[RMDB]
RNA sequence: GGGAACGACUCGAGUAGAGUCGAAAAGCCACGGAAAUGCGUUGCACGCCUGUGGAGUUCGGCGGUGUCCUGGUCGGUGACGAAGCCCGACGAGCCGCCGCGCACGAGUGUGAUCGGCGCGGACAGGUCGGAACGUAGAAUUCGUUCUACGUUCCGAAAAAGAAACAACAACAACAAC
Reactivity to DMS in 0.01 (KOAc 150mM, MgCl2 10mM, bicine 150mM(pH8.5), 24C), signal-to-noise 2, nucleotides 027 to 126: g030c000c050a150c110g010g010a050a120a110u040g020c050g000u000u000g030c050a000c020g000c130c020u020g020u000g000g000a140g060u050u010c030g000g000c010g000g030u010g030u020c130c160u020g040g010u000c010g000g000u060g000a110c120g040a180a260g050c070c000c000g010a010c000g010a240g000c060c030g000c000c000g010c020g000c010a080c000g020a080g020u000g030u050g010a090u070c000g040g000c010g000c050g000g000a140c050a060g000g000
Reactivity to 2A3 in 0.01 (KOAc 150mM, MgCl2 10mM, bicine 150mM(pH8.5), 24C), signal-to-noise 2, nucleotides 027 to 126: g060c010c000a080c040g120g070a150a130a080u240g010c020g030u010u060g000c020a000c010g010c000c000u040g010u050g020g030a200g070u150u150c010g010g000c000g050g010u100g170u180c030c040u090g060g010u000c010g000g060u080g040a180c220g110a070a010g050c030c000c000g000a000c000g020a010g000c000c000g000c030c000g000c000g000c000a070c020g030a060g010u080g000u030g020a080u170c040g010g010c000g000c030g030g020a060c050a050g090g020

Structure probing data (DMS and 2A3) for a 177-nucleotide construct.
It was measured as part of the RMDB library OK1LIB.
The reactions ran in a buffer of 150 mM KOAc, 10 mM MgCl2 and 150 mM bicine (pH 8.5), at 24 C.